Overview
An RNA of 177 nucleotides, treated with DMS and 2A3 and read out base by base. DMS adducts were read by reverse transcription with MarathonRT.

RNA sequence: GGGAACGACUCGAGUAGAGUCGAAAAUGCCCGGAGCAGCUUGGGUCACUUGCCUGGAGGGGCAUCCCAAACCUGACCUGGCCAGAGCGGCGACGGGUGGAAGGGGUGGAGAGGAGAGAAAGCAGGACAUGAGUCAUGAGUUCGCUCAUGACUCAUGAAAAGAAACAACAACAACAAC
Reactivity to DMS in 0.01 (KOAc 150mM, MgCl2 10mM, bicine 150mM(pH8.5), 24C), signal-to-noise 2, nucleotides 027 to 126: u000g020c010c000c010g030g000a220g020c010a040g010c060u000u000g030g000g000u000c040a070c190u000u000g030c040c030u010g000g010a300g010g000g030g000c080a110u010c010c020c020a040a150a120c060c050u000g000a100c020c070u010g010g010c030c030a170g010a080g010c070g000g040c020g010a090c040g000g020g040u000g000g000a050a070g010g020g020g000u010g010g000a180g000a120g000g000a130g000a060g010a030a050a130g000c050a060g010g030a270
Reactivity to 2A3 in 0.01 (KOAc 150mM, MgCl2 10mM, bicine 150mM(pH8.5), 24C), signal-to-noise 1, nucleotides 027 to 126: u100g010c020c000c020g000g000a040g010c030a010g050c040u020u060g010g020g050u040c060a060c090u110u170g040c000c020u070g010g070a040g060g000g010g000c040a130u120c000c000c000a040a070a050c010c010u040g120a150c000c000u000g000g000c020c000a040g010a010g090c000g000g030c010g010a060c040g000g040g050u130g040g030a120a090g000g010g040g020u200g060g020a250g020a050g040g030a160g010a010g000a060a120a010g020c080a060g080g040a010